[RMDB]
RNA sequence: GGGAACGACUCGAGUAGAGUCGAAAAGAUGGCCGAUCGACGUGCAGAACGCCGGCUGUCGCCGACCCACGUUCAAUACCGGUGAGAUGAUCGGCGUGCCCGCCGACCGCGCGAGAUAGACGAUGUCCUAACCAGUCAGCUUCGGCUGACUGGUUAGAAAAGAAACAACAACAACAAC
Reactivity to 2A3 in 0.01 (KOAc 150mM, MgCl2 10mM, bicine 150mM(pH8.5), 24C), signal-to-noise 2, nucleotides 027 to 126: g100a060u120g050g000c020c000g010a050u050c050g080a050c030g030u000g000c030a030g060a300a010c000g000c010c000g000g010c030u020g080u110c060g040c000c030g090a180c000c060c020a060c050g120u180u180c050a110a070u080a230c040c080g000g000u080g030a110g050a200u140g020a110u040c030g010g000c010g030u030g040c000c040c030g000c010c010g020a040c000c010g000c010g000c030g010a020g040a120u100a050g100a000c100g040a090u160g060u080c020
Reactivity to DMS in 0.01 (KOAc 150mM, MgCl2 10mM, bicine 150mM(pH8.5), 24C), signal-to-noise 2, nucleotides 027 to 126: g000a140u010g010g020c000c010g020a070u000c000g000a080c010g000u000g010c110a170g030a190a220c050g000c030c020g010g010c030u010g000u000c030g000c100c000g030a120c040c050c070a210c170g020u020u000c110a070a070u010a080c080c030g010g040u010g020a110g000a040u010g010a070u000c000g040g010c030g000u000g000c090c010c040g000c010c010g040a050c020c040g010c080g030c010g030a110g000a110u010a050g010a090c040g000a080u000g020u020c080

This 177-nucleotide RNA was probed chemically with 2A3 and DMS.
The 2A3 profile rests on 1,244 reads.
It was measured as part of the RMDB library OK2TRN.